[RMDB]
RNA sequence: GGGAACGACUCGAGUAGAGUCGAAAAUCGGUCACGGAGCAGAUGGCCUCCGCCAUUCAGGAGACGGAGCCGGAACGCUUCGAGCGACUCAAGCAGCGCAUCCACAACGUCACUGAGAGCAUCGGCAACUCCCUGCUCCCCACGGUCAACGACCUGAGAGGUGAAGGAAUUUCGAUUCCUUCACCUCAAAAGAAACAACAACAACAAC
Reactivity to 2A3 in 0.01 (KOAc 150mM, MgCl2 10mM, bicine 150mM(pH8.5), 24C), signal-to-noise 1, nucleotides 027 to 156: u050c000g020g020u080c000a000c060g000g010a010g010c000a000g000a020u040g000g020c060c030u060c050c050g000c000c000a080u180u110c070a100g060g020a170g050a200c040g030g020a040g000c100c050g060g000a120a000c030g020c000u080u000c010g000a020g090c040g090a080c030u050c160a090a090g000c070a000g030c020g000c050a090u050c040c000a000c010a050a140c070g060u010c000a010c000u010g000a050g030a000g080c000a050u060c070g040g000c020a080a100c090u040c050c020c000u000g000c000u050c030c000c000c000a040c080g020g000u090c030a120a100c070g050a010c000c030u030g040a070
Background: Chemical mapping of a 207-nucleotide RNA with 2A3. The reactions ran in a buffer of 150 mM KOAc, 10 mM MgCl2 and 150 mM bicine (pH 8.5), at 24 C. It was measured as part of the RMDB library OK3TST. For 2A3 the reverse transcriptase was SuperScript II with manganese.